RNA sequence: GGGAACGACUCGAGUAGAGUCGAAAAUUAACUUGCUUAAUAACCAAUGGAUAAGCAAUCAUAGCAGCAAUUGAUAACUCAGUCUUCAACAUUUCAUGCGCCAGAUCAGUGCCGCGAAUACCAAGCACUUUAGUGAUUAUAUCCUUUGCAUCAUCAACGUGAUACCUAGCUUCGGCUAGGUAUCACGAAAAGAAACAACAACAACAAC
Reactivity to 2A3 in 0.01 (KOAc 150mM, MgCl2 10mM, bicine 150mM(pH8.5), 24C), signal-to-noise 2, nucleotides 027 to 156: u070u040a020a040c020u030u080g030c000u070u100a060a020u100a140a210c010c070a050a110u120g060g020a050u030a040a000g020c000a000a030u140c020a020u060a090g020c050a000g010c000a060a050u080u090g040a120u110a140a090c020u070c060a020g020u050c050u200u110c030a070a090c000a120u070u110u100c040a060u140g000c020g000c100c000a000g010a130u140c070a040g020u020g080c040c030g030c000g050a050a010u050a120c060c000a060a000g020c000a000c000u080u130u100a100g000u030g050a000u000u170a060u040a010u210c000c000u000u070u120g010c080a040u090c000a000u020c000a050a100
About this RNA:
This 207-nucleotide RNA was probed chemically with 2A3. For 2A3 the reverse transcriptase was SuperScript II with manganese.